[RMDB]
RNA sequence: GGGAACGACUCGAGUAGAGUCGAAAAGCAAGUCGCAUCGCAAAACCGCGGCAAGUGGAGUUAGCGAGAGGAGGCUGGGUUUUGGCUUCCUUAAGCAAUCGGUCGCCGAGAAGGUGUGGUCGUUACCUAGACAGUUUUCUGUUCGCAGAAAACUGAACAGGAAAUUACUCUUCGGAGUAAUUUCCUGAAAAGAAACAACAACAACAAC
Reactivity to 2A3 in 0.01 (KOAc 150mM, MgCl2 10mM, bicine 150mM(pH8.5), 24C), signal-to-noise 4, nucleotides 027 to 156: g060c050a070a030g030u050c000g030c050a030u030c020g040c080a080a070a050a060c040c040g010c020g050g000c080a100a050g060u090g090g070a130g040u100u190a030g010c000g000a020g010a000g040g000a010g010g010c020u090g030g180g110u090u160u190u300g010g000c000u010u000c000c000u010u010a040a000g000c010a010a050u060c030g040g030u030c020g000c030c010g030a030g020a110a050g030g000u060g020u040g020g020u020c010g020u030u050a170c000c000u040a070g020a080c000a000g000u000u000u000u000c000u000g050u040u060c200g000c060a000g000a000a000a000a000c000u000g010a040a010
Reactivity to DMS in 0.01 (KOAc 150mM, MgCl2 10mM, bicine 150mM(pH8.5), 24C), signal-to-noise 2, nucleotides 027 to 156: g040c050a030a140g020u000c020g030c020a070u010c040g050c060a120a080a050a130c040c090g000c040g000g040c020a070a090g010u020g020g010a080g030u000u000a240g060c000g000a300g070a040g040g020a070g000g030c000u000g040g020g020u000u000u000u000g020g000c010u000u010c030c000u000u010a010a300g000c010a070a070u010c030g010g030u000c040g020c010c020g030a120g000a140a100g030g010u010g030u000g000g000u000c000g010u000u000a030c040c020u000a140g040a160c020a010g010u000u000u000u010c000u000g000u000u000c300g030c020a000g000a030a010a020a020c000u000g010a020a120